[RMDB]
Source: RMDB library OK2TST, as collected in RNAgym.
Chemical mapping of a 177-nucleotide RNA with DMS and 2A3.
The DMS profile rests on 5,306 reads.
For DMS the reverse transcriptase was MarathonRT.
Values cover nucleotides 27 to 126.
The RNA was probed in 150 mM KOAc, 10 mM MgCl2 and 150 mM bicine (pH 8.5) at 24 C.
RNA sequence: GGGAACGACUCGAGUAGAGUCGAAAAAAGCUGUCCGCAAGGGGGGAUGAUCGCAACUUGGUGAGAAAAAACCAAAGAAAAGGAAAUUAGGAACAUGGCUCGCGAUUGGCGACAAACGAAGUCACCCUGAUACGUUGUUAUUCGUAACAACGUAUCAAAAAGAAACAACAACAACAAC
Reactivity to DMS in 0.01 (KOAc 150mM, MgCl2 10mM, bicine 150mM(pH8.5), 24C), signal-to-noise 5, nucleotides 027 to 126: a100a080g020c020u000g000u000c030c050g030c110a090a080g010g000g010g000g010g000a070u000g020a070u000c040g010c060a070a110c060u000u000g010g010u000g000a130g010a010a070a070a100a110a050c030c000a010a040a090g010a060a060a060a080g010g000a060a060a090u000u000a050g010g020a080a060c080a060u000g010g000c030u000c060g000c040g000a080u000u000g000g020c050g000a030c060a030a060a080c070g010a060a050g000u000c030a080c030c010c080
Reactivity to 2A3 in 0.01 (KOAc 150mM, MgCl2 10mM, bicine 150mM(pH8.5), 24C), signal-to-noise 3, nucleotides 027 to 126: a000a000g030c020u020g020u030c020c010g020c070a090a080g030g030g000g000g000g000a020u070g000a020u040c010g000c060a020a030c040u030u040g020g030u060g020a100g170a020a150a020a000a000a010c060c040a070a060a040g080a030a120a010a010g070g020a060a080a040u150u080a130g070g000a030a000c030a050u050g020g000c020u020c010g020c000g060a100u020u020g050g000c010g010a020c030a000a050a000c030g040a040a010g010u020c020a020c020c000c010